[RMDB]
RNA sequence: GGGAACGACUCGAGUAGAGUCGAAAAUCCUAAGUCACAGGUCACAGUACAAGGGAGCUUAGUAGUAUCGGAAACGAUACACCAAAGCAUCGAUCUUGUAUCACAGCCUGUGAUAUGGAAAAACCUUUACCGGUACCUUCGGGUACCGGUAAAGGAAGAGCGAAAUAUUGUUCGCAAUAUUUCGCUCAAAAGAAACAACAACAACAAC
Reactivity to 2A3 in 0.01 (KOAc 150mM, MgCl2 10mM, bicine 150mM(pH8.5), 24C), signal-to-noise 2, nucleotides 027 to 156: u040c000c000u030a070a030g000u010c000a000c000a000g000g020u060c010a060c030a060g010u000a010c000a000a000g010g020g000a000g020c000u040u000a010g030u020a030g000u010a010u000c000g010g030a080a030a050c030g010a010u000a000c010a010c020c020a170a030a010g000c030a150u300c010g040a020u030c010u010u000g000u010a020u120c020a020c040a030g010c000c000u000g000u000g000a000u000a030u030g000g000a030a080a010a100a090c010c000u030u000u000a000c000c000g000g020u000a000c010c000u080u110c290g080g000g000u000a000c000c010g020g000u000a000a000a010g000g010a000a000
The record gives the reactivity of an RNA of 207 nucleotides to 2A3. Conditions: 150 mM KOAc, 10 mM MgCl2 and 150 mM bicine (pH 8.5), 24 C. 2A3 adducts were read by reverse transcription with SuperScript II with manganese. Reactivities are given for positions 27 through 156.